This 177-nucleotide RNA was probed chemically with 2A3 and DMS. DMS adducts were read by reverse transcription with MarathonRT. 2A3 adducts were read by reverse transcription with SuperScript II with manganese. The reactions ran in a buffer of 150 mM KOAc, 10 mM MgCl2 and 150 mM bicine (pH 8.5), at 24 C.

RNA sequence: GGGAACGACUCGAGUAGAGUCGAAAACUAGUCUGGCUCCUGGGACUCUAGAGGGAGUCAGUCUGAAAUAUUAAGUAGUGAACUCGUCUGUCCAGUGUCAGUGUUCAUUGGCAACUUUAGACUUGCCCAUCCAACUCAUGUUCGCAUGAGUUGGAUGAAAAGAAACAACAACAACAAC
Reactivity to 2A3 in 0.01 (KOAc 150mM, MgCl2 10mM, bicine 150mM(pH8.5), 24C), signal-to-noise 2, nucleotides 027 to 126: c000u010a020g000u000c000u000g000g000c000u000c010c020u030g000g050g080a100c020u020c100u260a100g010a130g060g010g000a000g030u020c000a000g000u010c010u010g010a070a090a030u300a100u170u180a120a120g060u120a000g000u040g050a000a000c000u020c070g060u020c060u070g070u040c030c000a030g000u040g060u160c060a090g050u000g020u140u020c020a000u090u010g000g010c000a000a030c050u140u160u140a030g030a050c030u030u010g020c010c000
Reactivity to DMS in 0.01 (KOAc 150mM, MgCl2 10mM, bicine 150mM(pH8.5), 24C), signal-to-noise 2, nucleotides 027 to 126: c030u010a010g020u000c000u000g010g000c000u000c000c000u010g020g010g020a080c050u000c180u010a110g030a300g000g000g010a010g020u000c000a010g000u000c030u000g010a060a070a090u010a090u010u010a070a070g010u010a110g040u000g000a050a030c010u000c070g000u000c030u020g000u000c020c050a150g000u000g010u000c060a080g010u010g010u000u010c050a020u010u000g000g020c020a010a040c040u000u010u020a110g010a120c170u000u000g010c010c020